[RMDB]
The record gives the reactivity of an RNA of 207 nucleotides to 2A3. Reactivities are given for positions 27 through 156. As a SHAPE reagent, 2A3 marks flexible, mostly unpaired nucleotides at the ribose 2'-OH. The reactions ran in a buffer of 150 mM KOAc, 10 mM MgCl2 and 150 mM bicine (pH 8.5), at 24 C. For 2A3, 412 sequencing reads were counted.
RNA sequence: GGGAACGACUCGAGUAGAGUCGAAAAAAGGCCUGGAUAUACGCCUUGAAGAUGUGUGCCUGGGCCUUGCUGGCCGACAGGAAUAUCUGGUUGCGCCCCGUUUCCAGCGCGUCGAUCAGCGCCUCGCGGGCGAAGUAGAACGUGGCGCCGAUCUGUCCUAAAGCGGUGGAUUCGUCCACCGCUUUAGAAAAGAAACAACAACAACAAC
Reactivity to 2A3 in 0.01 (KOAc 150mM, MgCl2 10mM, bicine 150mM(pH8.5), 24C), signal-to-noise 1, nucleotides 027 to 156: a010a000g000g000c020c020u000g070g060a010u060a020u020a070c100g000c020c080u180u130g050a170a030g020a070u010g050u000g010u000g020c020c020u090g000g040g000c000c010u000u110g010c020u030g070g100c070c040g010a020c020a040g060g130a110a150u240a130u150c070u080g110g050u060u070g020c060g040c060c040c000c020g020u030u030u000c010c070a060g020c010g080c120g040u180c060g030a090u090c050a050g030c000g050c020c030u050c010g070c050g000g070g000c200g020a050a010g070u210a040g010a200a000c020g020u010g000g000c020g000c180c010g000a030u060c020u050g090u060c000